The record gives the reactivity of an RNA of 177 nucleotides to 2A3 and DMS. Reactivities are rounded to 0.1 and cut off at 0 and 3. The data come from the RNA Mapping Database (RMDB), library M2PK50. The RNA was probed in 150 mM KOAc, 10 mM MgCl2 and 150 mM bicine (pH 8.5) at 24 C. Reactivities are given for positions 27 through 126. For DMS, 8,548 sequencing reads were counted. 2A3 adducts were read by reverse transcription with SuperScript II with manganese. DMS adducts were read by reverse transcription with MarathonRT.
RNA sequence: GGGAACGACUCGAGUAGAGUCGAAAAUGAGAAGCAUUCGUGCUUCUCAGAAAUGCUGCCCAAAGAGGACCUGGGGGUGUCUGGGCUGCUAAACUGAUCAGCUAACCGCGAUCUUCGGAUCGCGGAAAACGUAUAUGAUCUUCGGAUCAUAUACGUUAAAAGAAACAACAACAACAAC
Reactivity to 2A3 in 0.01 (KOAc 150mM, MgCl2 10mM, bicine 150mM(pH8.5), 24C), signal-to-noise 3, nucleotides 027 to 126: u020g000a000g000a010a000g010c010a010u070u150c230g070u040g000c000u000u000c000u000c000a000g010a010a090a010u130g000c020u030g000c000c010c020a080a160a020g220a040g060g020a020c040c070u120g090g000g030g000g000u030g000u040c030u040g020g030g000c020u020g000c020u050a010a050a070c040u050g060a150u140c060a020g040c020u040a050a070c000c000g000c000g010a000u000c000u010u010c050g100g000a010u000c000g010c010g000g000a010a000
Reactivity to DMS in 0.01 (KOAc 150mM, MgCl2 10mM, bicine 150mM(pH8.5), 24C), signal-to-noise 6, nucleotides 027 to 126: u000g010a010g010a010a010g010c000a030u010u010c210g030u000g000c000u000u000c000u000c000a010g000a090a080a080u010g010c060u000g010c020c000c010a050a120a160g000a140g000g000a050c030c050u000g010g020g020g010g010u000g000u000c040u000g000g000g000c020u000g000c040u000a040a080a120c140u000g000a100u010c120a080g000c120u020a110a230c010c000g010c000g000a010u000c000u000u010c190g010g000a010u000c000g010c000g000g000a010a010